The data come from the RNA Mapping Database (RMDB), library TTRINS.
An RNA of 177 nucleotides, treated with DMS and read out base by base.
RNA sequence: GGGAACGACUCGAGUAGAGUCGAAAAGAUAUGGAUUCGAACAAAAGGUUAUGGCUUUUGACGACGUUUGGGAUCGGAAACGAUCCCAUCGUCGAUAAGCCAUAACCUUUUGUCGAAUCCUAAGUCACCUUGAUAAUUGGUUCGCCAAUUAUCAAGGAAAAGAAACAACAACAACAAC
Reactivity to DMS in 0.01 (KOAc 150mM, MgCl2 10mM, bicine 150mM(pH8.5), 24C), signal-to-noise 2, nucleotides 027 to 126: g000a050u000a300u000g000g000a030u000u000c000g010a080a050c000a010a010a010a010g000g010u000u000a000u000g000g010c000u000u010u000u000g030a220c170g000a010c020g000u010u000u000g020g010g010a020u000c020g020g000a120a100a240c010g000a000u000c000c000c000a000u000c000g000u000c000g020a070u000a000a010g020c000c000a000u000a000a010c000c000u000u000u000u000g000u000c010g000a000a010u000c000c000u000a000a050g010u010c040a290